[RMDB]
RNA sequence: GGGAACGACUCGAGUAGAGUCGAAAAGUUGCACAACCGAGCCGGUCUUGUCAAAGAACUCAUGAAGGAAGAACUCGUUUCCUUCGAAAUCGUCAAUCUUCCAGCAGUAAGGUCUUAACAAAAAUGUCACAGGUACUCCGCAAGCGUCUCGAAAACCGGUGCAUGUAUAGUUCGCUAUACAUGCACCAAAAGAAACAACAACAACAAC
Reactivity to 2A3 in 0.01 (KOAc 150mM, MgCl2 10mM, bicine 150mM(pH8.5), 24C), signal-to-noise 3, nucleotides 027 to 156: g010u010u030g010c040a020c010a090a110c030c020g010a020g020c010c020g060g000u020c010u040u060g020u020c050a120a050a010g030a070a050c040u040c080a090u150g040a040a010g000g010a000a020g020a070a050c040u020c100g040u000u010u020c020c000u000u050c040g030a030a030a030u130c030g060u070c070a040a120u020c030u050u020c010c000a000g010c010a010g070u130a090a030g010g020u030c020u070u080a080a030c040a080a060a050a020a040u120g040u070c010a010c000a060g040g000u020a060c010u010c020c020g020c020a030a050g030c010g050u020c020u020c020g090a060a240a050a050c050c080
Reactivity to DMS in 0.01 (KOAc 150mM, MgCl2 10mM, bicine 150mM(pH8.5), 24C), signal-to-noise 2, nucleotides 027 to 156: g010u000u010g020c020a060c090a100a140c020c010g000a110g070c040c030g020g030u000c050u000u000g030u010c040a050a070a060g010a080a080c040u020c040a070u000g020a140a160g000g010a050a040g030a050a090c070u010c070g030u030u000u000c000c010u000u000c060g000a050a060a070u000c020g020u010c040a090a190u000c030u000u000c010c010a050g040c060a170g030u000a040a050g010g000u010c030u000u000a100a060c050a030a000a020a090a100u000g060u000c020a080c070a040g020g010u000a060c020u000c000c040g000c020a030a140g010c040g020u020c010u020c020g000a050a040a050a100c080c070